[RMDB]
RNA sequence: GGGAACGACUCGAGUAGAGUCGAAAAGGUAGGGAAAGUUUUUCGGUGUAGGAUGAGACUAUAUAGUAUCAGCUAGUUGGUAAGGUAAAGGCUUACCAAGGCUAUGACGCUUAACUGGUCUGAGAGGUAAAUUCAAACGCUUCGGCGUUUGAAUUUAAAAAGAAACAACAACAACAAC
Reactivity to DMS in 0.01 (KOAc 150mM, MgCl2 10mM, bicine 150mM(pH8.5), 24C), signal-to-noise 2, nucleotides 027 to 126: g020g030u030a010g000g010g040a010a050a060g000u000u010u010u020u010c110g010g020u000g060u020a040g020g000a110u030g000a060g020a030c030u000a040u010a090u000a010g050u000a120u000c020a030g020c010u000a140g010u000u000g000g030u010a000a000g000g050u000a120a070a160g030g000c000u000u000a020c000c040a000a020g000g010c000u020a090u070g050a040c040g030c030u000u000a020a120c300u000g000g000u010c010u010g010a110g030a100g020g000
Structure probing data (DMS) for a 177-nucleotide construct. For DMS the reverse transcriptase was MarathonRT. Conditions: 150 mM KOAc, 10 mM MgCl2 and 150 mM bicine (pH 8.5), 24 C.